[RMDB]
RNA sequence: GGGAACGACUCGAGUAGAGUCGAAAAAGUAAGUGGGGUAACCAAGGAGGAGAGGGGCACAGGCAGGAAGCACCGGGUGGCAGCCUCCACAGCGCCUUCGCCACCUCAUGGCCAAGCGUCCGUGUCUAGGCUCAGCCUUGUCAUGGCUGUCCCCACAGGAGAGUUUAUAUUUCGAUAUAAACUCUCCAAAAGAAACAACAACAACAAC
Reactivity to 2A3 in 0.01 (KOAc 150mM, MgCl2 10mM, bicine 150mM(pH8.5), 24C), signal-to-noise 1, nucleotides 027 to 156: a000g200u190a190a030g000u000g000g000g000g000u050a040a000c010c040a010a030g080g000a030g000g020a050g020a070g050g020g050g000c060a060c010a080g060g000c020a030g060g000a020a020g000c010a040c040c000g000g070g000u040g000g040c020a010g030c000c000u070c070c050a100c010a050g080c060g000c000c010u170u130c060g000c000c000a030c010c020u050c040a110u180g020g000c030c050a120a020g030c000g040u000c010c050g020u020g010u000c020u010a000g040g030c000u000c080a020g120c010c010u030u070g080u060c030a050u020g000g000c040u020g100u080c000c000c000c000a000c020a000